[RMDB]
RNA sequence: GGGAACGACUCGAGUAGAGUCGAAAAAGCAGUACUGCUUUGCGCCGCCAGUGAUGCGCUGGUAUCAGAUGCGGCGGCGUGAGUGGAUGCCUCCGAUGCUGAUGACGAGGCGGCUGUUGCGCUGGCCAUAAUGGGACCUUUUCGAAGGUCCCAUUAUAAAAGAAACAACAACAACAAC
Reactivity to DMS in 0.01 (KOAc 150mM, MgCl2 10mM, bicine 150mM(pH8.5), 24C), signal-to-noise 9, nucleotides 027 to 126: a030g010c010a020g010u010a150c030u000g010c000u000u010u020g040c000g000c000c000g010c000c000a150g020u010g000a030u010g010c020g020c230u030g020g020u000a020u020c000a090g010a130u020g030c120g000g000c000g010g010c000g030u000g020a020g000u000g000g000a160u030g000c000c000u020c010c030g010a130u000g020c150u030g010a080u010g010a300c300g010a050g000g010c000g000g000c010u000g010u020u010g000c140g010c050u010g000g010c070c100
Reactivity to 2A3 in 0.01 (KOAc 150mM, MgCl2 10mM, bicine 150mM(pH8.5), 24C), signal-to-noise 4, nucleotides 027 to 126: a000g040c030a020g060u120a120c020u030g010c000u080u050u180g020c010g000c010c000g000c000c000a070g020u060g050a050u060g000c050g040c280u180g190g020u040a070u120c010a020g130a280u160g180c110g040g000c000g000g000c000g010u000g000a000g000u000g010g040a040u100g000c000c000u050c000c020g020a040u110g000c080u150g060a260u130g030a030c010g030a050g000g040c030g010g000c010u000g050u110u030g010c080g010c040u030g050g040c020c010